[RMDB]
RNA sequence: GGGAACGACUCGAGUAGAGUCGAAAAGGGGUCGUGAACGAGCGAGGUACAGCUUUUGACGAGCUGAAGCCUCCACGGCUCGAUAAGCUGUACUACCCACCGCUCGCAACACGACGGAGGCACCCAAAACACUUAGGUUCCUUCGGGAACCUAAGUGGCUGUAAUACGCGUUCGCGCGUAUUACAGCAAAAGAAACAACAACAACAAC
Reactivity to DMS in 0.01 (KOAc 150mM, MgCl2 10mM, bicine 150mM(pH8.5), 24C), signal-to-noise 2, nucleotides 027 to 156: g000g030g000g030u000c000g080u000g010a270a050c020g010a020g040c000g030a260g040g030u010a070c000a030g010c000u000u010u000u010g010a160c280g000a020g020c000u000g050a040a190g010c010c010u000c000c010a300c010g030g010c000u000c000g020a040u010a020a080g010c010u000g000u000a040c000u000a060c010c000c000a300c000c000g000c010u020c010g090c000a070a160c050a040c020g010a080c000g000g040a010g080g080c000a070c010c020c000a050a010a100a300c010a040c000u000u020a020g010g000u000u000c000c000u010u010c300g040g010g000a050a000c020c000u000a000a000g040u000g000
Reactivity to 2A3 in 0.01 (KOAc 150mM, MgCl2 10mM, bicine 150mM(pH8.5), 24C), signal-to-noise 5, nucleotides 027 to 156: g050g020g000g010u010c000g000u000g020a060a030c010g000a000g000c000g000a020g030g010u000a010c000a010g000c030u110u170u210u240g210a140c050g000a000g010c010u020g030a060a020g020c000c000u010c000c010a010c010g000g000c000u000c000g000a080u060a210a030g000c000u000g000u010a010c010u030a020c040c060c030a040c010c000g000c000u000c000g010c010a110a130c010a010c020g030a000c050g000g000a000g000g000c000a030c000c010c010a050a090a010a020c010a000c000u000u000a000g010g000u010u010c010c000u020u070c260g070g000g000a000a000c010c000u000a000a000g000u000g000

This 207-nucleotide RNA was probed chemically with DMS and 2A3. For DMS the reverse transcriptase was MarathonRT. The RNA was probed in 150 mM KOAc, 10 mM MgCl2 and 150 mM bicine (pH 8.5) at 24 C. Source: RMDB library RNAMAK, as collected in RNAgym.